[RMDB]
RNA sequence: GGGAACGACUCGAGUAGAGUCGAAAAUAUGCACAUAAUAUAGGACUAACUUGUAUCAUUGACCCAGAUUUAAGAUCUGCUGUGUCGUUUGGUUGCUCAAUGUCACAUGCUCAAGAAGAUUUAGGCACACUGACAUCCUCUUCGGAGGAUGUCAGUGAAAAGAAACAACAACAACAAC
Reactivity to 2A3 in 0.01 (KOAc 150mM, MgCl2 10mM, bicine 150mM(pH8.5), 24C), signal-to-noise 1, nucleotides 027 to 126: u140a100u040g050c030a060c000a120u180a080a010u110a070u140a100g080g000a020c030u020a110a040c000u120u030g020u030a030u070c090a130u000u090g030a030c080c000c000a010g060a150u120u080u100a090a050g030a020u010c040u050g050c010u030g020u000g000u050c010g060u040u030u040g070g030u080u020g000c070u040c080a020a030u000g010u000c010a060c030a040u080g080c030u000c020a050a130g080a080a000g050a040u100u100u020a020g060g060c000a000
Reactivity to DMS in 0.01 (KOAc 150mM, MgCl2 10mM, bicine 150mM(pH8.5), 24C), signal-to-noise 1, nucleotides 027 to 126: u010a090u000g000c160a090c130a040u000a070a020u000a040u000a050g030g030a220c090u030a060a100c040u000u000g000u000a050u000c050a060u010u000g010a140c040c040c020a060g030a040u000u030u010a090a110g030a110u000c020u000g020c040u010g030u000g000u020c050g020u000u000u000g020g010u000u010g000c040u000c060a040a070u000g000u000c030a070c010a040u000g020c000u000c110a000a080g000a080a050g000a030u000u000u010a030g020g010c120a130